[RMDB]
RNA sequence: GGGAACGACUCGAGUAGAGUCGAAAAGAUAUGGACACCGUAGACAUGCUCAGUGGUCGGAAACGACCACGAGCAACAGCUACAGGUGUCCUAAGUCAAAAGACAUUUCACGUUCGCGUGAAAUGUCCGAACAGAACGCGUUCGCGCGUUCUGUUCGAAAAGAAACAACAACAACAAC
Reactivity to DMS in 0.01 (KOAc 150mM, MgCl2 10mM, bicine 150mM(pH8.5), 24C), signal-to-noise 1, nucleotides 027 to 126: g000a010u000a110u000g010g000a000c000a030c000c000g010u000a010g000a070c170a180u000g010c000u000c000a150g050u010g000g040u000c000g010g000a030a040a080c010g010a010c000c000a020c020g010a000g090c010a050a040c300a080g000c000u000a010c010a120g060g030u000g030u000c000c000u000a000a080g000u010c000a120a060a120a170g020a000c000a000u000u010u000c000a000c000g040u000u010c100g040c020g030u000g000a010a010a000u000g000u000c000